[RMDB]
RNA sequence: GGGAACGACUCGAGUAGAGUCGAAAAGAAGAGAAUACACGGCUGACAAAACCCUGUCCCAACCUCCACGUGGUGUCGGCUGGAUAAUGCUGCAUUAUGUUGCAUUUAUCACCUGGGAAGGAGAAGACACCACCGUGCUAUUCGUAGCACGGUGGUGAAAAGAAACAACAACAACAAC
Reactivity to 2A3 in 0.01 (KOAc 150mM, MgCl2 10mM, bicine 150mM(pH8.5), 24C), signal-to-noise 3, nucleotides 027 to 126: g160a000a020g130a000g080a040a070u090a060c020a010c000g030g000c010u010g020a000c000a010a110a030a090c020c010c020u020g090u000c000c000c000a010a040c010c000u040c020c010a100c090g070u080g000g030u010g000u000c000g040g000c020u040g010g040a000u000a020a030u000g000c030u010g000c040a050u150u080a070u300g030u060u010g030c000a000u040u030u070a050u000c010a000c030c000u030g000g010g070a070a060g050g050a060g020a080a000g110a040
Reactivity to DMS in 0.01 (KOAc 150mM, MgCl2 10mM, bicine 150mM(pH8.5), 24C), signal-to-noise 2, nucleotides 027 to 126: g020a160a170g010a160g000a120a130u000a080c060a090c060g000g040c010u010g000a020c090a180a060a060a060c000c030c060u000g000u020c000c020c010a130a160c110c000u020c000c030a050c080g020u000g000g010u040g000u000c060g060g030c070u000g050g160a060u000a000a020u000g000c010u010g020c010a180u050u010a130u020g000u000u000g000c010a040u000u000u000a050u000c040a300c080c030u040g000g040g000a160a070g000g000a090g000a120a050g020a220
Chemical mapping of a 177-nucleotide RNA with 2A3 and DMS. The RNA was probed in 150 mM KOAc, 10 mM MgCl2 and 150 mM bicine (pH 8.5) at 24 C. For 2A3, 2,242 sequencing reads were counted.